[RMDB]
RNA sequence: GGGAACGACUCGAGUAGAGUCGAAAAAGACUUGUAUUCGUACAAGUCUACAGAAAUUUCGCUAGCACACGAUCACACCUUGCGUUCUCAAUAACGAUCGAACAACGUGUCAAUUCGUUGACACGAAACCACAUCCCCAAUUCGUUGGGGAUGUGGUAAAAGAAACAACAACAACAAC
Reactivity to 2A3 in 0.01 (KOAc 150mM, MgCl2 10mM, bicine 150mM(pH8.5), 24C), signal-to-noise 2, nucleotides 027 to 126: a000g010a000c000u000u000g010u000a040u040u120c210g000u030a000c000a020a020g000u000c010u000a010c030a030g230a000a080a080u050u060u020c030g020c030u040a030g000c030a080c020a030c120g030a010u010c010a010c020a030c030c000u050u060g000c000g000u030u000c020u000c000a040a050u180a110a040c150g030a070u050c060g010a080a030c050a050a040c010g020u010g010u000c010a000a020u070u090c160g030u040u010g000a000c000a000c000g010a050a010
Reactivity to DMS in 0.01 (KOAc 150mM, MgCl2 10mM, bicine 150mM(pH8.5), 24C), signal-to-noise 1, nucleotides 027 to 126: a040g000a020c000u000u000g020u000a010u020u000c150g000u000a000c000a000a020g040u000c000u000a070c140a100g000a050a100a040u000u010u000c030g000c000u000a030g000c150a110c150a050c070g000a020u000c000a110c150a090c110c040u000u000g000c080g050u000u010c030u000c040a100a000u000a080a100c150g030a030u000c150g000a050a120c300a140a080c000g000u000g000u000c000a000a060u000u040c140g020u000u000g000a030c000a000c000g020a010a060